[RMDB]
The record gives the reactivity of an RNA of 177 nucleotides to DMS and 2A3.
RNA sequence: GGGAACGACUCGAGUAGAGUCGAAAAGAUAUGGAGCUUCAUAGUCGCGUUGAUCUCGGAAACGAGGGAGCGGACUAUGAGAGCUCCUAAGUCAAAAGCGCUCGUUUCGUUCGCGAAACGAGCGCAACGUAAUGCAAUUGUUCGCAAUUGCAUUACGAAAAGAAACAACAACAACAAC
Reactivity to DMS in 0.01 (KOAc 150mM, MgCl2 10mM, bicine 150mM(pH8.5), 24C), signal-to-noise 2, nucleotides 027 to 126: g010a060u010a300u000g000g000a010g020c010u000u000c000a020u000a000g000u000c000g010c010g030u000u010g000a100u010c000u000c000g000g020a120a080a210c000g000a020g000g010g010a050g030c000g000g000a020c000u000a010u010g000a050g020a040g000c000u000c000c000u000a010a080g010u000c030a080a070a120a180g000c010g030c000u000c000g010u000u000u000c000g020u000u020c240g020c020g000a010a010a010c010g000a010g010c020g010c000a000a010
Reactivity to 2A3 in 0.01 (KOAc 150mM, MgCl2 10mM, bicine 150mM(pH8.5), 24C), signal-to-noise 2, nucleotides 027 to 126: g020a000u080a030u210g000g010a010g010c010u050u030c030a020u000a010g000u010c020g000c040g300u140u050g100a300u010c010u000c000g080g000a120a060a030c020g010a000g000g020g010a020g010c020g010g050a010c010u000a010u000g010a030g030a010g000c000u000c000c000u000a050a000g020u000c030a000a030a120a100g020c030g010c000u030c040g020u000u000u000c050g040u060u130c300g000c010g150a010a000a000c000g000a000g010c020g000c000a000a000

It was measured as part of the RMDB library TTRDEL.
For DMS the reverse transcriptase was MarathonRT.
The RNA was probed in 150 mM KOAc, 10 mM MgCl2 and 150 mM bicine (pH 8.5) at 24 C.
The DMS profile rests on 2,999 reads.